[RMDB]
RNA sequence: GGGAACGACUCGAGUAGAGUCGAAAAAUCGCGCCUGGUCGGAACAUAACGACGGCGGGCCGGUGGGGAAUCAGGGGGCUACCGUGGGAUAGCGAUGAGACAGCCCCUCCGAUGGCACCAAGCGUCGGCGUACUCUCUGGUUCGCCAGAGAGUACGCAAAAGAAACAACAACAACAAC
Reactivity to DMS in 0.01 (KOAc 150mM, MgCl2 10mM, bicine 150mM(pH8.5), 24C), signal-to-noise 1, nucleotides 027 to 126: a070u000c180g010c090g080c000c000u000g030g000u000c010g010g010a070a050c000a080u040a110a180c020g000a160c000g000g000c040g000g000g000c070c060g000g000u020g000g000g010g000a140a070u010c060a200g030g010g000g000g000c040u000a100c090c060g020u000g040g000g050a140u010a020g020c000g010a120u020g010a270g000a110c010a190g010c000c010c020c030u010c030c000g000a110u040g000g020c080a240c040c090a050a120g000c010g000u000c010g000
Reactivity to 2A3 in 0.01 (KOAc 150mM, MgCl2 10mM, bicine 150mM(pH8.5), 24C), signal-to-noise 2, nucleotides 027 to 126: a000u000c000g020c010g000c040c010u030g020g020u070c000g060g010a200a080c010a200u110a050a040c010g000a000c050g040g010c000g000g000g110c060c000g010g050u060g000g000g030g070a020a050u070c020a060g030g000g020g000g000c000u040a020c000c040g120u140g050g090g050a090u150a110g010c010g080a180u180g000a070g010a020c100a020g060c030c030c030c000u000c000c000g030a120u050g050g000c000a020c250c000a070a030g000c020g010u020c010g070
Structure probing data (DMS and 2A3) for a 177-nucleotide construct. The data come from the RNA Mapping Database (RMDB), library RFM100. DMS adducts were read by reverse transcription with MarathonRT.